[RMDB]
RNA sequence: GGGAACGACUCGAGUAGAGUCGAAAAGGAGGAGGGCGGCCCGUUGCCGUGGAAUCCCAUGCAUAGUUAAAGCAUGUUUUACUUCACUCAUGUUGCCAUGACAAAGCUAAGUGAAUCCUUAGAGAAAUGGAUGUUUUUGUGUCUGGCUCACAGCAGACUGAUUUACUCGUUUCGACGAGUAAAUCAGAAAAGAAACAACAACAACAAC
Reactivity to 2A3 in 0.01 (KOAc 150mM, MgCl2 10mM, bicine 150mM(pH8.5), 24C), signal-to-noise 2, nucleotides 027 to 156: g050g000a030g020g020a030g030g060g030c040g010g000c040c080c090g170u090u200g030c040c000g020u020g030g020a050a080u040c030c020c000a010u010g000c030a090u110a280g100u230u210a180a040a000g010c000a000u030g130u040u060u050u070a080c050u040u030c060a060c030u030c030a040u090g010u030u060g030c050c030a090u110g000a030c020a030a050a040g010c040u050a010a030g010u050g160a060a040u070c000c000u060u050a050g010a010g060a170a110a060u080g090g020a070u030g040u060u120u010u030u050g060u030g030u010c020u020g030g060c020u030c040a080c030a020g090c000a020g040a100
Reactivity to DMS in 0.01 (KOAc 150mM, MgCl2 10mM, bicine 150mM(pH8.5), 24C), signal-to-noise 2, nucleotides 027 to 156: g010g030a030g010g020a070g040g040g040c060g010g020c020c000c240g000u000u000g020c000c050g000u010g000g000a140a170u000c060c050c000a130u000g010c030a100u000a110g030u000u000a050a070a120g000c010a070u000g020u000u000u000u000a060c060u010u000c060a040c040u010c060a090u000g040u010u000g020c040c050a030u000g020a060c030a040a100a150g020c000u010a030a150g020u010g020a060a090u000c010c020u000u030a160g010a140g020a090a070a080u010g010g020a080u000g010u000u030u000u010u000g010u000g010u000c010u000g020g020c040u010c080a070c030a100g060c030a120g020a270